[RMDB]
RNA sequence: GGGAACGACUCGAGUAGAGUCGAAAAAUCCGGUCUGGCUGAUGUUUGCGCUUUUCGCCUUUGGUUCACUGUUCGGCUUCACUGGAAUGCUGGUCGCCGUCCCGGCUGCGGCGGCUGUCGGGGUGCAUGAGCAUACGACUUUCGAGUCGUAUGCUCAAAAAGAAACAACAACAACAAC
Reactivity to DMS in 0.01 (KOAc 150mM, MgCl2 10mM, bicine 150mM(pH8.5), 24C), signal-to-noise 1, nucleotides 027 to 126: a110u010c030c020g010g020u000c050u000g030g020c050u010g000a060u000g010u010u000u000g030c120g010c100u000u000u000u000c070g020c040c070u000u000u000g010g000u000u000c060a070c060u010g000u000u000c080g040g000c050u000u010c070a050c050u010g000g010a090a070u000g010c030u010g020g010u000c070g000c030c010g010u000c070c060c000g050g000c090u010g020c100g020g000c100g000g000c020u000g000u010c030g020g020g030g030u000g000c100a110